This 177-nucleotide RNA was probed chemically with 2A3 and DMS. Conditions: 150 mM KOAc, 10 mM MgCl2 and 150 mM bicine (pH 8.5), 24 C.

RNA sequence: GGGAACGACUCGAGUAGAGUCGAAAAGAUAUGGAUCCCGUUAAGAGGCGAAUAUAUUCGGAAACGAAUAUAUAGCUACCCACCUUAACCGGGAUCCUAAGUCAAAACCGGGUGUUCGCACCCGGAAGUAUAAGAUACGCUUCGGCGUAUCUUAUACAAAAGAAACAACAACAACAAC
Reactivity to 2A3 in 0.01 (KOAc 150mM, MgCl2 10mM, bicine 150mM(pH8.5), 24C), signal-to-noise 2, nucleotides 027 to 126: g040a000u030a020u070g000g000a000u020c050c010c000g000u000u000a020a010g020a060g180g000c030g090a210a010u040a000u010a000u000u000c020g030g030a070a020a030c010g010a000a000u010a000u020a010u000a000g000c000u050a060c080c050c010a070c010c000u040u000a060a110c250c230g000g060g010a000u000c000c000u000a010a020g020u000c020a000a060a060a130c000c000g000g000g010u010g040u070u130c300g030c080a000c000c000c000g010g010a000a010
Reactivity to DMS in 0.01 (KOAc 150mM, MgCl2 10mM, bicine 150mM(pH8.5), 24C), signal-to-noise 3, nucleotides 027 to 126: g020a030u000a300u020g000g010a010u010c000c000c000g010u000u000a000a030g000a150g020g020c010g000a130a060u000a000u000a010u000u000c000g010g010a110a070a240c000g000a010a010u000a000u000a000u000a210g010c010u000a030c040c070c110a300c060c010u000u000a000a030c080c130g050g010g010a010u000c000c000u000a010a060g000u000c030a080a040a100a090c000c010g000g010g010u000g000u000u020c240g030c000a000c000c000c000g020g000a000a030